[RMDB]
RNA sequence: GGGAACGACUCGAGUAGAGUCGAAAACGCCGAGUUUCGACUCGGCGAAAAAAGGGGUCUAAAGGAUGAACUACGUCGACGAAGUACUGAAGCCUCCACGGUACAGAGACGCACUUUAGACGGAGGCACCCAAAAAAGCCAACGUUCGCGUUGGCAACAUAAAUUUAGGAUUCGUCCUAAAUUUAUGAAAAGAAACAACAACAACAAC
Reactivity to DMS in 0.01 (KOAc 150mM, MgCl2 10mM, bicine 150mM(pH8.5), 24C), signal-to-noise 2, nucleotides 027 to 156: c000g100c010c040g010a030g050u010u000u010c270g030a110c010u050c000g000g010c020g000a000a020a010a090a070a100g000g000g040g010u010c020u000a020a050a040g010g000a120u030g010a210a250c020u000a000c010g050u000c000g050a300c120g000a180a120g000u000a100c040u000g000a070a180g010c000c020u000c010c000a250c000g010g000u010a090c020a100g000a300g000a020c000g000c030a050c040u000u000u010a030g030a030c000g000g010a060g080g060c000a040c030c000c030a000a100a110a090a040a210g010c000c000a030a060c020g020u000u000c270g040c060g050u000u000g010g010c010a010a040
Reactivity to 2A3 in 0.01 (KOAc 150mM, MgCl2 10mM, bicine 150mM(pH8.5), 24C), signal-to-noise 6, nucleotides 027 to 156: c010g000c000c000g010a010g000u100u160u140c160g140a050c000u000c000g000g000c000g050a020a000a000a000a000a000g040g010g010g000u000c020u020a020a010a010g080g060a200u240g100a190a110c120u290a100c260g000u010c000g070a300c010g020a080a000g000u000a000c000u020g060a160a020g010c000c000u000c000c000a000c000g000g000u000a000c000a000g020a000g000a020c040g010c140a100c040u020u010u010a000g010a020c040g000g000a000g000g000c000a020c010c010c010a070a110a030a020a010a000g020c010c000a010a010c000g010u070u100c230g020c000g090u010u000g000g000c000a000a000